[RMDB]
RNA sequence: GGGAACGACUCGAGUAGAGUCGAAAAUCGGCGAUAACGAGUUGAUGUAUGGAGCGCCGAAGUUGCGAAGUGAUCGGGCGGCUGUCCUAGCGUUUAGGGCGUAACUUGGACGUUUCAACAACCGAAAGGGUUAUUAAAUCUUCGGAUUUAAUAACCCAAAAGAAACAACAACAACAAC
Reactivity to 2A3 in 0.01 (KOAc 150mM, MgCl2 10mM, bicine 150mM(pH8.5), 24C), signal-to-noise 4, nucleotides 027 to 126: u130c010g030g000c010g050a080u030a080a000c010g010a030g050u040u020g090a090u080g030u080a170u100g030g020a010g020c020g020c000c000g030a000a000g050u030u000g020c010g040a110a040g030u040g090a090u210c090g000g050g000c080g070g050c200u160g030u060c000c010u070a070g020c060g060u010u180u230a200g020g030g000c010g000u010a000a030c020u000u010g030g000a040c000g010u000u020u010c030a040a040c020a060a040c010c010g050a150a070a020
Reactivity to DMS in 0.01 (KOAc 150mM, MgCl2 10mM, bicine 150mM(pH8.5), 24C), signal-to-noise 3, nucleotides 027 to 126: u020c020g030g020c010g020a110u010a050a070c020g000a050g030u010u000g000a140u040g010u000a070u000g000g000a060g000c000g010c010c010g010a010a030g000u000u000g010c010g010a120a060g010u010g000a110u030c100g000g000g020c090g000g040c090u030g010u010c030c040u020a180g010c060g030u020u030u040a040g000g000g010c010g000u000a010a020c100u000u000g010g000a080c060g000u000u000u000c020a090a070c110a120a130c030c000g010a110a130a120
This 177-nucleotide RNA was probed chemically with 2A3 and DMS. For 2A3, 2,183 sequencing reads were counted. The data come from the RNA Mapping Database (RMDB), library OK1LIB. The RNA was probed in 150 mM KOAc, 10 mM MgCl2 and 150 mM bicine (pH 8.5) at 24 C.